[RMDB]
RNA sequence: GGGAACGACUCGAGUAGAGUCGAAAAGAGUCCUCUAGACCGCAAGGAGGAAAUUACCAGCAGGGGGUGAUCCACCCGGAGAUGAGCGGACAAGCCACAUCCAGAGGACCCCUUCAGCGAACAGAAGCCUACUAAUAACGUUCGCGUUAUUAGUAGGAAAAGAAACAACAACAACAAC
Reactivity to DMS in 0.01 (KOAc 150mM, MgCl2 10mM, bicine 150mM(pH8.5), 24C), signal-to-noise 5, nucleotides 027 to 126: g020a160g010u010c000c000u000c020u000a140g020a150c110c110g030c100a100a160g000g000a030g010g010a050a090a060u020u000a110c050c030a110g030c080a120g020g010g000g000g020u010g020a080u000c030c010a140c110c030c070g010g020a050g000a060u000g000a300g010c020g000g010a140c210a100a130g010c000c020a050c100a130u000c000c010a130g020a200g010g000a040c010c010c010c020u000u000c060a060g010c070g010a070a030c120a050g000a110a130g010
Reactivity to 2A3 in 0.01 (KOAc 150mM, MgCl2 10mM, bicine 150mM(pH8.5), 24C), signal-to-noise 3, nucleotides 027 to 126: g030a030g080u020c020c000u000c050u030a120g050a160c070c080g090c130a080a110g010g010a010g010g030a020a060a030u100u060a050c040c030a010g020c040a020g070g000g000g010g010u020g020a090u000c000c010a030c070c050c050g010g000a060g010a040u060g000a010g000c010g010g060a070c090a070a000g000c000c010a040c010a050u020c010c000a010g000a060g030g000a020c010c000c000c000u020u100c070a040g020c050g090a040a010c030a050g130a100a000g050